[RMDB]
RNA sequence: GGGAACGACUCGAGUAGAGUCGAAAAGGAAGCACGUUGCAAGACCUCAGGAUCGGUAGUAAGACCAGUAAGCUUCGUUCGCACCCAACAUCGUGUAUCGCCAUUCUGUACGUCUGCUGGCGAGCUGUGCUUUACACCGAAGGCGCCUACCGCAGCGCCUCGAGGAACAGUUCGCUGUUCCUCGAGGAAAAGAAACAACAACAACAAC
Reactivity to 2A3 in 0.01 (KOAc 150mM, MgCl2 10mM, bicine 150mM(pH8.5), 24C), signal-to-noise 3, nucleotides 027 to 156: g050g030a030a030g020c030a020c120g090u110u030g020c040a060a020g010a090c000c040u030c050a050g010g070a100u070c050g070g000u050a080g040u050a130a060g020a100c030c010a010g050u090a060a030g000c030u110u070c050g070u080u060c040g000c030a050c000c060c000a030a000c020a130u170c060g000u030g040u150a030u130c040g000c010c010a040u090u050c040u060g060u090a030c050g050u020c010u060g070c040u070g050g000c010g010a010g000c030u050g030u110g000c000u030u040u080a060c050a050c040c010g050a030a040g040g010c020g010c000c050u110a080c030c070g030c080a010g030c020g000
Reactivity to DMS in 0.01 (KOAc 150mM, MgCl2 10mM, bicine 150mM(pH8.5), 24C), signal-to-noise 2, nucleotides 027 to 156: g000g030a070a080g020c010a120c040g040u000u000g050c060a060a160g030a150c010c040u000c060a110g020g020a080u000c050g030g000u010a040g000u010a050a060g050a080c020c000a090g010u000a080a180g000c010u010u000c010g020u000u000c070g000c050a240c050c040c010a120a120c090a050u040c050g040u010g020u000a090u000c030g020c000c000a050u000u000c030u000g020u020a050c030g040u030c010u020g030c130u000g040g000c030g030a050g020c030u010g000u020g000c070u000u000u000a110c040a230c030c030g030a040a030g050g020c010g040c050c030u000a110c110c050g020c060a160g000c020g010